The record gives the reactivity of an RNA of 207 nucleotides to 2A3.
For 2A3, 1,180 sequencing reads were counted.
Source: RMDB library RNAMAK, as collected in RNAgym.
RNA sequence: GGGAACGACUCGAGUAGAGUCGAAAAGCGUACUACUGAGGCUUUGAUCUACGCGGAGCGACGAUAAGCAGUCCCAAAUAGGACUGCUUUUGACGUCGAACCUGUAGGGAGCCUCAGUAUCGCAAAACUAACCAUCGCGUUCGCGCGAUGGUUAGAAGUAGUCCAAAACGUUCGCGUUUUGGACUACAAAAGAAACAACAACAACAAC
Reactivity to 2A3 in 0.01 (KOAc 150mM, MgCl2 10mM, bicine 150mM(pH8.5), 24C), signal-to-noise 1, nucleotides 027 to 156: g030c000g050u120a050c020u010a000c000u010g010a000g020g030c020u160u160u100g110a150u050c000u000a010c010g040c240g080g010a070g020c000g000a010c000g000a040u000a020a000g000c000a000g000u010c000c010c050a140a290a090u300a070g000g010a010c020u000g000c010u000u000u000u030g000a020c010g000u000c000g030a060a060c000c010u040g000u030a020g000g010g000a020g000c010c000u000c020a000g000u000a000u010c000g000c000a000a000a000a070c000u000a000a000c000c000a000u000c000g000c020g020u050u050c260g030c030g000c000g130a000u000g050g000u000u000a010g000a000a000